[RMDB]
RNA sequence: GGGAACGACUCGAGUAGAGUCGAAAAAGAUCUCGAUAUUUGCCUCGGGUAUCAAGGCUCUGAAAAUGAUCAGGAUUUAGAGGAGAUGGCUCAUUUUCAGAAAGAGUUUUAUAUUCUCCCUCUGGCCUUAUACACUACAGGCAAAUGGCACCGAUGAGAUACGCGGACUAUUCGUAGUCCGCGUAUCAAAAGAAACAACAACAACAAC
Reactivity to 2A3 in 0.01 (KOAc 150mM, MgCl2 10mM, bicine 150mM(pH8.5), 24C), signal-to-noise 2, nucleotides 027 to 156: a040g140a130u050c030u020c050g050a110u080a000u220u020u010g000c030c020u040c060g010g030g000u000a010u030c110a010a010g000g020c000u000c000u140g060a040a060a110a140u220g030a140u020c040a010g110g020a060u110u170u300a080g000a030g000g010a020g010a030u010g010g000c000u010c010a070u010u060u200u070c050a080g140a080a170a010g030a100g000u000u010u190u000a200u040a070u120u050c030u030c060c050c000u000c030u060g010g000c000c000u050u000a010u000a010c160a120c000u130a030c040a000g000g000c000a000a000a000u020g010g060c100a120c140c090g110a100u210g030a010